Record summary: This 177-nucleotide RNA was probed chemically with DMS and 2A3. The 2A3 profile rests on 2,548 reads. DMS adducts were read by reverse transcription with MarathonRT. For 2A3 the reverse transcriptase was SuperScript II with manganese. The data come from the RNA Mapping Database (RMDB), library 15KREP.

[RMDB]
RNA sequence: GGGAACGACUCGAGUAGAGUCGAAAAAAAGGCUUAUCAAGAGAGGUGGAGCGACUGGCCCGAUGAAACCCGGCAGCCAGAAAUGGUGCCAAUUUCUGCAGCGGAAACGUUGAAAGAUGAGCCGAAAGCUAUAUGUGAAGUUCGCUUCACAUAUAGCAAAAGAAACAACAACAACAAC
Reactivity to DMS in 0.01 (KOAc 150mM, MgCl2 10mM, bicine 150mM(pH8.5), 24C), signal-to-noise 2, nucleotides 027 to 126: a030a060a180g030g010c000u000u000a020u000c010a120a060g000a040g010a040g000g020u000g010g000a090g010c020g030a080c080u000g010g030c020c000c010g000a070u000g000a080a080a100c210c180c050g010g030c070a150g000c020c010a020g000a080a030a080u000g010g030u010g010c030c010a060a090u010u000u010c020u000g000c000a020g000c000g000g000a080a110a120c000g030u000u000g000a070a080a130g000a030u000g000a010g030c000c010g020a080a090a120
Reactivity to 2A3 in 0.01 (KOAc 150mM, MgCl2 10mM, bicine 150mM(pH8.5), 24C), signal-to-noise 1, nucleotides 027 to 126: a000a000a000g000g000c000u000u010a000u020c040a100a000g030a000g010a030g110g060u090g040g030a080g030c000g030a030c010u000g010g000c000c010c000g010a040u160g040a060a080a040c030c030c010g000g040c050a020g050c010c000a000g020a020a090a030u090g030g000u060g000c000c000a000a000u000u050u000c020u040g000c020a010g010c010g020g010a000a040a010c020g030u000u000g010a050a040a000g010a000u010g000a000g000c010c010g030a010a000a000